The record gives the reactivity of an RNA of 207 nucleotides to DMS and 2A3. For 2A3, 3,416 sequencing reads were counted. The reactions ran in a buffer of 150 mM KOAc, 10 mM MgCl2 and 150 mM bicine (pH 8.5), at 24 C. The DMS profile rests on 3,179 reads. 2A3 adducts were read by reverse transcription with SuperScript II with manganese.
RNA sequence: GGGAACGACUCGAGUAGAGUCGAAAACACUUGAGAAAAUUGUCGGCAUUCUCAAGGGCUUUCUCGACACCAAGGAGGCCAAGUGGUGAUGAAGUGCUUGAUUCGUCAGGGCAGCAGGCCUAUUUUCAGCCCUUUACAUUACGGCAGUAAGACAAGCCCCUACCUAUUAGUUCGCUAAUAGGUAGGGAAAAGAAACAACAACAACAAC
Reactivity to DMS in 0.01 (KOAc 150mM, MgCl2 10mM, bicine 150mM(pH8.5), 24C), signal-to-noise 1, nucleotides 027 to 156: c010a050c000u000u000g000a050g000a000a030a080a090u000u000g020u000c050g050g100c110a300u000u000c000u000c030a050a010g020g020g020c000u000u000u000c040u000c020g000a140c050a000c020c020a120a170g000g000a080g030g030c010c010a060a160g020u000g010g010u010g020a080u000g000a060a080g020u000g000c060u010u000g020a110u000u010c100g000u000c100a080g010g000g020c000a120g000c020a110g020g000c010c080u010a070u000u010u000u010c040a160g000c000c030c020u000u010u000a090c090a070u000u000a100c070g010g040c060a120g000u000a070a110g000a080c020a040a050g000c050
Reactivity to 2A3 in 0.01 (KOAc 150mM, MgCl2 10mM, bicine 150mM(pH8.5), 24C), signal-to-noise 4, nucleotides 027 to 156: c060a010c010u010u020g000a010g010a020a090a100a140u150u100g100u120c060g040g040c020a060u030u000c010u000c010a010a010g010g000g000c020u030u050u030c040u020c040g070a040c020a030c070c050a050a020g050g010a010g000g050c010c010a030a040g070u050g040g030u040g020a110u050g020a050a040g030u000g060c010u070u040g020a060u150u040c030g080u060c090a050g000g030g020c030a050g020c030a020g040g110c020c040u050a110u020u110u040u080c060a020g000c000c010c000u020u030u080a090c070a090u080u050a010c020g040g010c040a010g050u160a070a040g070a030c060a070a020g050c000